[RMDB]
Source: RMDB library OK3TST, as collected in RNAgym. This 207-nucleotide RNA was probed chemically with 2A3 and DMS. The 2A3 profile rests on 3,480 reads. For 2A3 the reverse transcriptase was SuperScript II with manganese. For DMS, 8,640 sequencing reads were counted.
RNA sequence: GGGAACGACUCGAGUAGAGUCGAAAAGCGGCGUAGCUCCUUGAAGCCGCAGGGCGGGCGCAGCGCGCAGAGCGUCAUAAAUAGGCUGAUGAACAUACCGCACUCGGAUUCCAUCAGCUGGUUAAUCUCGGUAUUGAUACAGCCUUGUCGCGCGUCGCCGCGACUAGUUAUUCGUAACUAGUCGCGGAAAAGAAACAACAACAACAAC
Reactivity to 2A3 in 0.01 (KOAc 150mM, MgCl2 10mM, bicine 150mM(pH8.5), 24C), signal-to-noise 4, nucleotides 027 to 156: g030c000g010g000c040g060u110a070g030c050u040c030c030u070u110g090a080a000g010c020c000g000c010a000g010g000g030c020g020g040g020c000g000c020a010g010c020g010c010g000c040a030g020a020g180c020g050u080c090a090u130a210a130a030u110a050g000g000c010u020g010a170u050g040a080a010c010a030u010a020c000c010g040c070a100c150u130c070g040g000a030u190u060c010c000a040u080c050a110g120c150u050g000g010u070u220a040a030u010c070u040c050g000g010u020a020u020u070g040a040u050a190c000a000g000c000c000u010u030g050u060c030g010c020g000c000g030u030c010g000
Reactivity to DMS in 0.01 (KOAc 150mM, MgCl2 10mM, bicine 150mM(pH8.5), 24C), signal-to-noise 4, nucleotides 027 to 156: g000c000g030g010c000g030u000a110g010c060u000c040c040u020u020g040a100a220g030c000c010g050c020a060g010g030g010c030g010g040g010c040g010c040a170g030c010g010c030g020c070a140g010a180g030c030g010u000c040a210u010a100a080a120u000a110g010g020c000u000g000a100u000g000a110a160c200a080u000a110c020c000g000c160a120c150u000c030g020g010a150u000u010c020c000a030u000c030a060g010c080u010g020g040u000u010a040a060u000c000u000c030g020g020u000a060u000u000g010a230u010a090c010a060g000c000c030u000u010g000u000c010g020c010g010c030g010u000c030g010